[RMDB]
RNA sequence: GGGAACGACUCGAGUAGAGUCGAAAAUAACGUACUUUCGAGUACGUUAAGUCUCCCGGCGCUAGCAGGGCUGAAGAGAAGAUGGAGGAGCUGGUGGUGCAAUUAGGGGGGGAUUCGUCCCCCCCAAGUAGGAAACAUCUUUCGAGAUGUUUCCUACAAAAGAAACAACAACAACAAC
Reactivity to DMS in 0.01 (KOAc 150mM, MgCl2 10mM, bicine 150mM(pH8.5), 24C), signal-to-noise 4, nucleotides 027 to 126: u000a010a000c000g010u000a010c010u000u010u010c190g010a020g010u000a010c000g010u000u000a000a080g000u000c120u000c010c010c000g020g010c090g020c100u000a050g020c070a060g000g010g020c040u000g000a120a110g000a080g010a070a080g010a060u000g000g010a120g010g000a070g000c050u000g010g010u000g010g010u000g030c110a070a090u000u010a110g000g000g010g010g010g010g000a040u000u000c190g000u010c000c000c000c000c000c000c000a000a010
Reactivity to 2A3 in 0.01 (KOAc 150mM, MgCl2 10mM, bicine 150mM(pH8.5), 24C), signal-to-noise 4, nucleotides 027 to 126: u030a010a000c010g000u010a000c010u010u070u120c200g010a010g010u000a000c000g000u000u010a010a010g030u010c010u020c030c000c000g080g000c030g010c030u050a050g050c020a040g070g110g000c010u050g050a070a030g030a030g040a160a020g040a040u120g020g040a070g020g010a020g050c030u040g000g080u030g000g010u020g010c030a050a170u130u080a300g000g000g010g000g000g000g010a010u010u040c110g030u020c030c010c010c000c000c000c000a010a000